Notes:
Structure probing data (2A3 and DMS) for a 177-nucleotide construct. It was measured as part of the RMDB library OK1LIB. Values cover nucleotides 27 to 126. Conditions: 150 mM KOAc, 10 mM MgCl2 and 150 mM bicine (pH 8.5), 24 C. For 2A3, 1,248 sequencing reads were counted.
[RMDB]
RNA sequence: GGGAACGACUCGAGUAGAGUCGAAAAAGCAGAACAUCCUCUUCCGGAGGCCGAAGUGGAUGACAAGUCGGUUGAACAACUGAACAACAUUUCUUCUAGCGGCAGUUAUUCGGCCCAAGGAUCAGUAACGUAGCAUCCGAUUCGUCGGAUGCUACGUAAAAGAAACAACAACAACAAC
Reactivity to 2A3 in 0.01 (KOAc 150mM, MgCl2 10mM, bicine 150mM(pH8.5), 24C), signal-to-noise 1, nucleotides 027 to 126: a000g130c120a060g000a090a000c000a080u020c000c020u020c000u050u010c010c010g140g000a100g100g000c010c020g010a010a000g010u100g150g030a050u090g030a010c020a070a000g050u060c010g020g180u010u060g040a030a010c050a050a090c070u000g050a000a030c010a000a020c000a030u150u070u000c050u030u000c010u050a000g000c000g020g000c010a020g020u020u140a170u130u050c010g000g010c030c010c000a010a000g070g000a040u150c030a050g080u130a080
Reactivity to DMS in 0.01 (KOAc 150mM, MgCl2 10mM, bicine 150mM(pH8.5), 24C), signal-to-noise 1, nucleotides 027 to 126: a030g000c030a080g010a090a230c090a000u000c050c000u000c120u000u000c050c000g000g000a190g000g050c030c020g030a050a000g010u000g040g020a080u000g030a110c090a050a060g000u000c040g010g000u000u000g000a060a030c130a040a090c010u000g000a060a010c110a120a140c010a040u020u000u040c150u010u040c010u000a110g000c100g000g000c000a070g010u020u050a150u010u010c070g010g000c020c000c050a150a080g000g040a040u000c170a050g000u110a150